[RMDB]
Structure probing data (2A3) for a 177-nucleotide construct.
Conditions: 150 mM KOAc, 10 mM MgCl2 and 150 mM bicine (pH 8.5), 24 C.
For 2A3, 819 sequencing reads were counted.
Source: RMDB library RFM100, as collected in RNAgym.
RNA sequence: GGGAACGACUCGAGUAGAGUCGAAAAUGUUUCCAAUUCACAAUAUGGCAAUAUCCUAGAAUAAUGAACAGGAACUCUGUGCAAUGGCAUUGGAGCUUGUGGCAUUGCAUCGUUCUUCCUGCGACAUCGACGACAUACGGUUCGCCGUAUGUCGUCGAAAAGAAACAACAACAACAAC
Reactivity to 2A3 in 0.01 (KOAc 150mM, MgCl2 10mM, bicine 150mM(pH8.5), 24C), signal-to-noise 1, nucleotides 027 to 126: u050g000u000u080u000c010c000a010a040u180u110c090a080c020a210a000u020a190u150g060g000c020a050a040u000a020u140c030c030u090a050g010a130a120u300a140a080u160g090a030a000c000a000g000g020a020a020c040u000c000u080g000u020g010c000a010a000u050g000g000c000a000u010u110g150g110a260g100c050u070u080g020u000g000g030c000a000u000u020g000c000a020u050c010g010u060u040c010u050u000c020c000u040g000c000g020a020c070a050u040